[RMDB]
RNA sequence: GGGAACGACUCGAGUAGAGUCGAAAAGAUAUGGACGAAGAACACCACGAUUGCUCGAGGGUCGGAAACGACCCUUCGAGCGUGGUGGGAGUCCUAAGUCAAACAGAGGGCCUUCGGGCCCUCUGAACCUGUAUGGCUUGUUCGCAAGCCAUACAGGAAAAGAAACAACAACAACAAC
Reactivity to DMS in 0.01 (KOAc 150mM, MgCl2 10mM, bicine 150mM(pH8.5), 24C), signal-to-noise 1, nucleotides 027 to 126: g000a060u000a250u000g000g010a010c010g020a120a090g060a140a210c050a050c000c000a000c020g000a190u010u020g030c020u000c000g030a020g000g010g010u000c000g000g010a090a070a200c000g000a020c000c000c000u000u000c000g020a000g010c000g030u000g000g030u000g010g000g000a160g000u010c000c000u000a070a140g010u010c010a150a120a170c000a000g010a010g020g010g030c000c000u010u010c180g000g040g020c000c000c000u000c000u000g030a040a120
This 177-nucleotide RNA was probed chemically with DMS. Source: RMDB library TTRDEL, as collected in RNAgym. For DMS the reverse transcriptase was MarathonRT. The reactions ran in a buffer of 150 mM KOAc, 10 mM MgCl2 and 150 mM bicine (pH 8.5), at 24 C. For DMS, 897 sequencing reads were counted.